[RMDB]
An RNA of 207 nucleotides, treated with 2A3 and read out base by base. It was measured as part of the RMDB library OK3TST. For 2A3 the reverse transcriptase was SuperScript II with manganese.

RNA sequence: GGGAACGACUCGAGUAGAGUCGAAAACAAACGGCUGCUUUCAUUCCGUUUUGCCAGAAGAUGUGCCGGGGAGGUGAACGUGUUUAGUUCUAGUGCUGACAGAUGUGAGACUGUGUUCAACUCUUGUCUUCCAGCUACCACUGCCACGUGUACCCCAUAUCAGCUCCUAGUUCGCUAGGAGCUGAUAAAAAGAAACAACAACAACAAC
Reactivity to 2A3 in 0.01 (KOAc 150mM, MgCl2 10mM, bicine 150mM(pH8.5), 24C), signal-to-noise 1, nucleotides 027 to 156: c020a040a080a000c020g010g020c040u060g060c030u140u260u180c090a110u130u060c010c050g010u020u040u080u140g020c070c010a000g010a130a040g010a120u100g000u080g020c030c000g020g010g000g000a110g000g000u100g020a060a040c060g000u010g030u100u090u190a070g020u100u000c040u000a010g000u020g060c000u000g010a040c020a090g040a060u100g100u040g040a020g010a040c100u090g000u020g090u300u150c050a030a020c030u090c000u010u020g000u030c000u000u050c140c020a010g000c000u090a050c000c090a030c010u010g010c020c000a010c010g000u030g080u050a080c000c000c060c010a020